[RMDB]
RNA sequence: GGGAACGACUCGAGUAGAGUCGAAAACAGGUAAGGUCUAACCAACCGCCUGUACCGAGUCCUUGGAACUGAAGUGGUAACACCAGGUUUAAGCGUAGGACAGGGAGCAACAGAGCCGAAACGAAAGCCUACUGUAUGAGUUCGCUCAUACAGUAGGAAAAGAAACAACAACAACAAC
Reactivity to DMS in 0.01 (KOAc 150mM, MgCl2 10mM, bicine 150mM(pH8.5), 24C), signal-to-noise 4, nucleotides 027 to 126: c020a010g000g000u010a130a120g020g010u000c000u010a120a100c300c280a260a010c000c010g010c000c000u010g010u000a130c030c020g000a120g000u000c020c010u000u000g000g000a030a010c020u000g010a080a170g010u000g010g000u000a120a140c030a040c010c010a300g000g000u000u000u010a090a140g000c080g000u000a030g010g000a040c040a220g000g010g010a080g020c040a040a020c070a040g000a130g000c070c040g030a050a030a040c060g000a100a110a150g000
Reactivity to 2A3 in 0.01 (KOAc 150mM, MgCl2 10mM, bicine 150mM(pH8.5), 24C), signal-to-noise 1, nucleotides 027 to 126: c030a010g040g010u200a300a050g010g000u050c000u010a010a020c000c020a010a000c000c000g000c020c010u010g010u010a080c000c000g020a070g070u040c000c040u030u010g060g020a010a000c020u020g040a090a000g030u010g020g040u080a100a010c000a010c030c020a020g060g070u010u010u050a100a030g050c080g070u030a010g030g000a010c020a010g050g030g000a060g000c030a010a100c000a060g060a020g050c050c030g080a100a000a030c030g000a100a110a000g030